RNA sequence: GGGAACGACUCGAGUAGAGUCGAAAAGAAGGAAAAUGUGCACAGCUUUCUCAUUUGCUUAAAUUUUGCAUCUCAAAAUUGAUGCAUGGAUCUUCCCUUUCUUUAGGAGAGUAAGACGGGCAGCUACACCCGCAGCAGUUACCUGCCAGCUGAGCAACUCAAAGGUAAGCUUCGGCUUACCUUUGAGAAAAGAAACAACAACAACAAC
Reactivity to 2A3 in 0.01 (KOAc 150mM, MgCl2 10mM, bicine 150mM(pH8.5), 24C), signal-to-noise 3, nucleotides 027 to 156: g040a020a040g080g010a110a050a060a100u120g060u060g050c040a020c010a090g060c050u020u100u070c000u020c050a110u070u100u140g060c030u080u100a070a080a120u110u150u120u060g010c020a040u010c040u040c190a090a170a230a230u150u160g020a010u040g000c000a010u030g010g020a030u010c030u000u080c020c000c000u040u120u010c060u020u110u120a080g020g040a030g010a020g080u030a090a000g060a020c050g000g020g020c030a010g000c020u050a020c050a030c060c020c020g000c010a000g020c000a000g000u090u060a060c010c020u000g030c000c020a010g020c030u080g010a000g020c010a030a080
Reactivity to DMS in 0.01 (KOAc 150mM, MgCl2 10mM, bicine 150mM(pH8.5), 24C), signal-to-noise 1, nucleotides 027 to 156: g030a110a070g000g010a100a000a040a050u020g010u000g030c030a110c080a150g040c020u020u000u000c030u000c010a110u000u000u000g010c020u010u000a040a080a080u000u020u000u000g010c040a000u010c050u000c020a130a040a160a150u020u010g000a010u000g010c020a080u030g010g010a070u010c060u010u010c010c010c010u000u000u000c040u000u000u010a100g030g000a090g000a080g010u020a110a070g000a050c070g010g000g010c020a050g000c040u000a000c030a060c050c000c050g010c020a070g050c040a030g000u010u000a080c100c020u000g020c010c040a110g000c010u010g010a070g010c000a110a160